[RMDB]
RNA sequence: GGGAACGACUCGAGUAGAGUCGAAAAUGAUCGAGAGAUCUAACGAUGUACGCGAGUCAAAGGCACAGACUCGAGCGAAAGCUCGGUCGAAAGACCGCGUACAUCGGUCGGCAAGUGUCAAGUCAAAGCAUAAUUACCUAUUCGUAGGUAAUUAUGCAAAAGAAACAACAACAACAAC
Reactivity to 2A3 in 0.01 (KOAc 150mM, MgCl2 10mM, bicine 150mM(pH8.5), 24C), signal-to-noise 7, nucleotides 027 to 126: u100g000a000u010c020g000a010g010a000g000a100u000c000u010a050a020c010g000a000u000g000u010a000c000g010c000g020a040g020u010c050a060a080a090g080g000c050a030c020a060g010a000c020u030c130g000a000g010c010g050a120a010a000g000c000u000c010g000g000u000c000g000a010a000a000g000a000c000c000g000c000g000u000a000c000a000u000c000g000g010u050c040g010g010c040a110a110g030u020g030u080c030a030a010g010u030c040a080a050a020
Reactivity to DMS in 0.01 (KOAc 150mM, MgCl2 10mM, bicine 150mM(pH8.5), 24C), signal-to-noise 9, nucleotides 027 to 126: u010g010a010u000c000g010a260g010a250g010a010u000c000u000a090a080c010g010a010u000g000u000a000c000g020c000g000a050g010u000c010a030a080a100g010g010c060a030c060a300g000a010c000u000c010g020a010g010c000g010a120a090a160g000c000u000c000g000g000u000c000g000a070a080a140g000a010c000c000g010c010g010u000a000c000a000u000c000g000g010u010c130g010g010c030a060a080g020u000g000u000c020a110a220g000u000c030a070a110a140